Notes
This 207-nucleotide RNA was probed chemically with 2A3. It was measured as part of the RMDB library OK3TST.
[RMDB]
RNA sequence: GGGAACGACUCGAGUAGAGUCGAAAAUGAUAUAUCAUAAAGGGUAUGCUCAUGGCCGAUGAAUGGAUCACCGUGUUUAUUGGGUCCUAUUGCUUCCAUGCUACUAGUAUAGAUCAAAUACUUGAUUCCUAGGUCCACACAAGCUGCCAAAAUAGUCUCAGUAUCCGUACUUCGGUACGGAUACUGAAAAAGAAACAACAACAACAAC
Reactivity to 2A3 in 0.01 (KOAc 150mM, MgCl2 10mM, bicine 150mM(pH8.5), 24C), signal-to-noise 1, nucleotides 027 to 156: u060g040a000u050a010u020a050u220c010a060u110a130a060a030g130g000g020u100a060u130g030c000u050c120a100u010g030g000c030c060g020a030u030g060a040a040u030g040g010a010u040c050a050c100c080g030u000g220u190u220u050a190u060u150g050g040g120u040c020c000u010a090u010u140g020c000u160u100c000c010a040u080g000c000u000a080c010u000a040g040u060a050u090a050g040a060u150c070a060a040a040u050a060c060u020u050g010a020u050u010c000c000u010a000g000g010u030c050c000a020c020a010c050a090a000g000c010u010g010c000c000a040a080a030a000u100a050g050u020c070